Structure probing data (DMS and 2A3) for a 177-nucleotide construct. Reactivities are rounded to 0.1 and cut off at 0 and 3. For DMS, 898 sequencing reads were counted. For 2A3 the reverse transcriptase was SuperScript II with manganese. The 2A3 profile rests on 1,651 reads. The reactions ran in a buffer of 150 mM KOAc, 10 mM MgCl2 and 150 mM bicine (pH 8.5), at 24 C. Reactivities are given for positions 27 through 126. The data come from the RNA Mapping Database (RMDB), library OK2TST.
[RMDB]
RNA sequence: GGGAACGACUCGAGUAGAGUCGAAAAUAUAUUGCAUCAUUUGCAGAACAUGGUGCCGAUAUGAUUUCAAUUCAUGUCGAAUCAACGCCUCAUAUUCAUCGUGCUAUUCAAAUGAUUAAACAUUUAGCAGCGUAAGACCAUUCGUGGUCUUACGCUGAAAAGAAACAACAACAACAAC
Reactivity to DMS in 0.01 (KOAc 150mM, MgCl2 10mM, bicine 150mM(pH8.5), 24C), signal-to-noise 2, nucleotides 027 to 126: u000a070u010a120u020u010g020c050a020u000c020a020u000u000u010g010c070a090g040a150a140c110a020u000g030g040u000g010c300c030g020a020u000a000u000g010a020u000u000u010c290a110a110u000u000c010a040u010g010u020c010g040a130a060u010c160a070a120c200g020c120c070u010c090a030u010a060u020u010c100a030u000c020g040u000g000c020u000a110u000u010c030a010a010a040u030g000a020u030u010a080a160a130c030a020u000u000u000a020g010
Reactivity to 2A3 in 0.01 (KOAc 150mM, MgCl2 10mM, bicine 150mM(pH8.5), 24C), signal-to-noise 2, nucleotides 027 to 126: u190a000u030a020u030u120g020c010a010u030c000a000u010u000u070g060c040a020g020a060a020c000a020u020g020g020u010g030c080c020g020a010u010a010u000g060a030u020u210u160c090a090a120u050u000c010a000u050g050u040c040g010a050a040u130c040a030a070c080g020c000c000u070c030a040u080a080u210u040c020a030u060c050g000u030g000c010u030a040u060u050c030a000a010a050u000g000a020u100u190a040a200a050c050a070u080u070u160a040g030